The record gives the reactivity of an RNA of 177 nucleotides to 2A3. It was measured as part of the RMDB library OK1LIB. For 2A3, 596 sequencing reads were counted. Values cover nucleotides 27 to 126.
RNA sequence: GGGAACGACUCGAGUAGAGUCGAAAAUUGAUCGGCUCGAUAGGCCAUUUGUCGCUGUGCGCCAGGAGGUGCCAAUGAGGGUACGCCCAUACGAGCUGCUGCUGCUGCUUGUGGCUGUAAGCCAUCAGUCCCGCCCACUAUUCGUAGUGGGCGGGACAAAAGAAACAACAACAACAAC
Reactivity to 2A3 in 0.01 (KOAc 150mM, MgCl2 10mM, bicine 150mM(pH8.5), 24C), signal-to-noise 2, nucleotides 027 to 126: u150u090g010a040u040c010g020g000c030u070c120g130a150u080a130g010g000c000c020a050u030u010u170g100u000c020g030c010u020g000u050g110c000g000c050c000a000g000g150a100g020g000u020g000c000c040a110a300u300g120a150g090g050g000u040a020c000g250c050c000c000a000u050a000c110g050a070g000c000u010g050c020u050g000c000u000g000c000u000g090c010u030u040g040u000g040g010c000u000g060u150a040a040g000c000c000a000u050c020a010